[RMDB]
RNA sequence: GGGAACGACUCGAGUAGAGUCGAAAAGGUGGCUCUGAGAGAAUGGCUCCACAUACCGUGACAGAGUCACCGAUUUAGCAUGUUCGUCCUACUUAGGACCUCCUAAGGUAGUAGGACGUUCAUGCGAGGGUACCAUUACCUUCGGGUAGUGGUACCCAAAAGAAACAACAACAACAAC
Reactivity to 2A3 in 0.01 (KOAc 150mM, MgCl2 10mM, bicine 150mM(pH8.5), 24C), signal-to-noise 9, nucleotides 027 to 126: g000g000u000g000g000c000u000c010u010g120a140g020a010g080a210a090u110g030g030c050u080c130c010a080c010a050u230a070c020c060g030u020g030a020c000a000g000a000g010u010c000a000c000c000g000a000u000u010u050a010g000c000a000u000g000u000u000c000g000u000c000c000u000a020c010u050u090a090g080g090a120c000c010u210c010c050u130a120a040g050g010u020a040g060u000a000g000g010a000c000g000u000u000c000a000u000g000c000g000a080
Reactivity to DMS in 0.01 (KOAc 150mM, MgCl2 10mM, bicine 150mM(pH8.5), 24C), signal-to-noise 8, nucleotides 027 to 126: g000g040u000g010g000c000u010c000u000g000a180g000a150g010a140a050u020g000g010c100u030c110c200a100c170a100u030a220c070c050g000u020g010a190c010a010g000a000g010u000c000a000c000c010g000a020u020u030u030a110g010c000a010u000g000u000u000c010g000u000c000c000u000a030c000u000u010a060g000g010a180c200c300u030c090c050u030a060a060g000g030u010a060g020u000a010g010g010a000c000g010u000u000c000a010u000g000c000g010a090
This 177-nucleotide RNA was probed chemically with 2A3 and DMS.
For 2A3, 48,787 sequencing reads were counted.
The DMS profile rests on 25,828 reads.
The data come from the RNA Mapping Database (RMDB), library OK1LIB.